[RMDB]
RNA sequence: GGGAACGACUCGAGUAGAGUCGAAAAAGUGAGAGGUAGAUAUACUUUUGAUUCAUUCAGCCAUGAUUGAGCAGCUUUUCUGAAGCACUCGAGCGUGCCAGAAUCUGGCAAGAGGGUGAGGCUCUUGAUAUCCACUUUCAAAGGUACACAGACUCCAAAACUAGCAUCCAUUCGUGGAUGCUAGUUUAAAAGAAACAACAACAACAAC
Reactivity to DMS in 0.01 (KOAc 150mM, MgCl2 10mM, bicine 150mM(pH8.5), 24C), signal-to-noise 1, nucleotides 027 to 156: a090g040u000g000a060g050a080g010g020u010a070g000a160u010a090u000a060c010u000u000u000u020g010a100u010u000c040a120u020u020c070a200g010c080c080a110u000g000a090u000u000g030a060g000c000a140g010c030u000u000u000u040c180u010g010a020a120g030c030a110c000u000c030g020a090g020c030g030u010g000c030c030a170g030a030a060u000c050u000g020g000c030a060a090g010a020g030g010g040u020g010a090g010g020c050u010c030u000u000g010a120u000a090u000c040c060a050c060u010u000u000c040a020a030a070g000g000u000a020c050a080c090a100g010a100c000u010c010c020a040
Reactivity to 2A3 in 0.01 (KOAc 150mM, MgCl2 10mM, bicine 150mM(pH8.5), 24C), signal-to-noise 2, nucleotides 027 to 156: a000g080u040g000a160g000a000g040g020u070a020g070a090u070a040u060a200c030u070u140u090u090g090a100u050u060c050a030u050u020c020a040g040c040c010a070u070g030a070u080u060g010a010g040c020a010g020c030u020u050u090u010c060u080g060a050a000g010c010a010c020u050c020g040a040g000c040g000u030g010c000c000a020g040a070a030u040c060u020g020g000c020a020a030g040a030g050g030g010u090g020a030g020g030c010u000c010u030u000g020a020u020a040u120c010c000a020c010u010u070u040c040a080a040a030g000g020u070a030c080a010c030a060g060a080c010u040c070c030a030